An RNA of 207 nucleotides, treated with DMS and 2A3 and read out base by base.
[RMDB]
RNA sequence: GGGAACGACUCGAGUAGAGUCGAAAAGAAAGAAAGAAAGAAAGGUAUGAAGUCCUAUUCACUCCCGAUAGGAUAAACUUCAUAUUGAUCGUGUAUGUGCUAACGCACAUACACGAAUGCGCAUGCAGAACUGCAUGCAUGAACAUAGGGAGUGCAAACGACCUAUACUAUUCGUAGUAUAGGUCGUAAAAGAAACAACAACAACAAC
Reactivity to DMS in 0.01 (KOAc 150mM, MgCl2 10mM, bicine 150mM(pH8.5), 24C), signal-to-noise 3, nucleotides 027 to 156: g020a140a090a120g010a130a070a100g010a150a110a090g000a090a130a240g010g010u010a020u000g000a040a030g000u010c020c020u000a040u000u000c020a010c050u000c000c000c010g010a060u010a020g010g020a080u000a060a100a060c010u010u000c000a010u010a020u000u000g000a100u000c020g050u000g000u000a010u000g020u000g000c000u010a110a230c300g000c000a010c000a010u000a000c010a010c000g020a040a010u010g010c070g010c000a020u000g010c020a050g000a070a080c160u000g000c040a050u000g000c000a020u000g010a080a060c110a130u000a080g020g030g040a060g070u010g000c100a040a090
Reactivity to 2A3 in 0.01 (KOAc 150mM, MgCl2 10mM, bicine 150mM(pH8.5), 24C), signal-to-noise 7, nucleotides 027 to 156: g050a010a050a000g070a070a070a010g060a060a090a010g080a070a120a010g030g000u010a000u010g010a000a000g010u010c000c000u000a000u010u020c040a000c020u000c010c000c000g000a000u000a000g010g010a020u080a090a110a010c000u000u000c000a000u010a020u030u080g030a040u030c000g000u000g010u000a000u000g010u000g010c050u120a120a030c160g000c000a000c000a000u000a000c000a000c000g000a000a010u020g010c030g010c010a000u000g000c010a010g070a300a080c160u050g010c000a010u000g000c000a020u120g030a040a030c080a070u120a040g000g000g000a030g010u010g010c050a100a100
Notes: The DMS profile rests on 6,358 reads. Values cover nucleotides 27 to 156. The data come from the RNA Mapping Database (RMDB), library OK3TST. The reactions ran in a buffer of 150 mM KOAc, 10 mM MgCl2 and 150 mM bicine (pH 8.5), at 24 C.